[RMDB]
RNA sequence: GGGAACGACUCGAGUAGAGUCGAAAACAAAAUGGUCAAUUGCGUGAUUUGCACUUAGAGCAAAGUAAAGAUGUGAUUGAAUUAGGCAAUCAUGAACCAAAUACUACUCCUAUAACAACUCACAUCGUCAGAAAAGCUGAUUCGUCAGCUUUUCUGAAAAAGAAACAACAACAACAAC
Reactivity to DMS in 0.01 (KOAc 150mM, MgCl2 10mM, bicine 150mM(pH8.5), 24C), signal-to-noise 3, nucleotides 027 to 126: c140a080a060a130a240u000g020g020u000c090a040a060u000u000g000c090g010u010g010a100u000u000u000g010c020a040c150u010u000a080g020a130g010c060a010a070a070g030u000a040a060a070g010a010u000g010u010g020a070u010u000g000a100a120u010u000a020g010g010c070a030a040u010c060a070u000g000a110a080c060c060a040a060a170u000a070c090u000a100c140u000c030c060u000a040u020a050a120c070a010a060c180u010c010a010c010a020u000c050g000
Reactivity to 2A3 in 0.01 (KOAc 150mM, MgCl2 10mM, bicine 150mM(pH8.5), 24C), signal-to-noise 3, nucleotides 027 to 126: c030a010a100a010a120u110g000g010u010c010a050a040u070u080g040c030g040u090g130a150u000u010u130g000c030a020c070u100u190a050g030a050g080c040a040a060a070g050u150a060a140a040g030a010u020g010u000g010a010u030u040g020a040a140u080u010a060g050g030c020a040a030u040c040a110u120g020a040a040c050c020a040a090a020u070a020c020u040a070c040u020c010c010u070a080u040a250a060c040a030a030c030u010c000a020c010a040u000c010g040

Source: RMDB library OK2TRN, as collected in RNAgym. An RNA of 177 nucleotides, treated with DMS and 2A3 and read out base by base. The reactions ran in a buffer of 150 mM KOAc, 10 mM MgCl2 and 150 mM bicine (pH 8.5), at 24 C. For 2A3 the reverse transcriptase was SuperScript II with manganese. In probing experiments dimethyl sulfate is read out at A N1 and C N3, which are open when not base-paired. The 2A3 profile rests on 2,931 reads.